[RMDB]
RNA sequence: GGGAACGACUCGAGUAGAGUCGAAAAGGGUGCCCUAUCCCAGCACUGCAUUUUCGGUAGAAAGGCUAAGAACCUCCCCAUGAGGCAAGGUGUGACUUUUCCUUCUGGAACCUAGCGGCUGGUUCCGCAACGUAGGUACGUUCGCGUACCUACGUUGAAAAGAAACAACAACAACAAC
Reactivity to 2A3 in 0.01 (KOAc 150mM, MgCl2 10mM, bicine 150mM(pH8.5), 24C), signal-to-noise 1, nucleotides 027 to 126: g030g000g000u050g020c000c000c000u030a080u020c000c020c000a000g030c010a020c030u090g010c060a070u150u030u060u120c040g060g000u020a050g130a100a050a020g080g010c050u090a130a000g050a170a070c010c000u020c010c000c000c010a080u110g010a000g030g000c030a020a000g040g010u000g040u050g060a020c030u060u060u040u030c000c030u030u140c020u060g000g000a000a000c010c010u020a070g040c010g040g000c040u030g000g040u000u040c000c000g000
Reactivity to DMS in 0.01 (KOAc 150mM, MgCl2 10mM, bicine 150mM(pH8.5), 24C), signal-to-noise 3, nucleotides 027 to 126: g010g020g010u000g000c020c040c050u010a150u000c020c010c000a230g020c010a040c020u010g010c080a050u000u000u000u000c050g010g020u000a060g010a070a070a060g000g000c030u010a060a110g010a080a130c050c010u010c070c030c020c030a100u000g020a090g030g000c100a050a050g000g020u000g010u000g000a080c010u000u010u010u000c030c040u010u000c100u010g010g000a040a030c040c010u000a120g010c050g010g020c060u010g010g000u010u000c000c010g030

Conditions: 150 mM KOAc, 10 mM MgCl2 and 150 mM bicine (pH 8.5), 24 C. This 177-nucleotide RNA was probed chemically with 2A3 and DMS. Values are in units of 0.01, from 0 to 300, in steps of 10. Reactivities are given for positions 27 through 126. The 2A3 profile rests on 1,909 reads.